An RNA of 177 nucleotides, treated with DMS and 2A3 and read out base by base.
Values cover nucleotides 27 to 126.
For DMS the reverse transcriptase was MarathonRT.
[RMDB]
RNA sequence: GGGAACGACUCGAGUAGAGUCGAAAAAAUCCCCAGUCCAGACUAAUACGUAAGAGGUUUUUUUUUAUUUGUGUGUGAGCUCCUGCAAUUGAUCUUCCCCCUCGAUGACAUCCUCGUUCAUAGAACGGUUAUCCUUAGGCUUCGGCCUAAGGAUAACAAAAGAAACAACAACAACAAC
Reactivity to DMS in 0.01 (KOAc 150mM, MgCl2 10mM, bicine 150mM(pH8.5), 24C), signal-to-noise 1, nucleotides 027 to 126: a100a040u010c100c000c000c060a060g000u000c000c050a030g000a090c030u040a040a020u040a070c080g000u000a000a130g000a060g000g000u000u000u010u010u010u020u000u070u000a010u020u030u000g000u010g050u020g030u010g000a090g000c040u000c020c010u000g000c100a070a040u060u010g020a070u020c040u000u030c000c020c020c060c050u000c000g020a030u010g000a080c190a100u000c060c020u000c000g020u010u010c010a130u050a070g000a030a060c130g000
Reactivity to 2A3 in 0.01 (KOAc 150mM, MgCl2 10mM, bicine 150mM(pH8.5), 24C), signal-to-noise 2, nucleotides 027 to 126: a000a050u050c030c020c000c000a020g050u010c010c000a020g010a130c060u130a100a120u070a150c100g100u090a080a030g000a050g010g050u040u020u020u000u030u000u150u030u060a210u020u210u110g050u030g030u010g010u020g080a000g000c000u000c010c000u040g000c020a040a080u070u070g040a070u060c030u010u050c000c010c010c000c000u040c010g030a050u090g010a000c010a030u030c030c000u000c010g030u000u020c030a140u040a120g030a060a000c000g000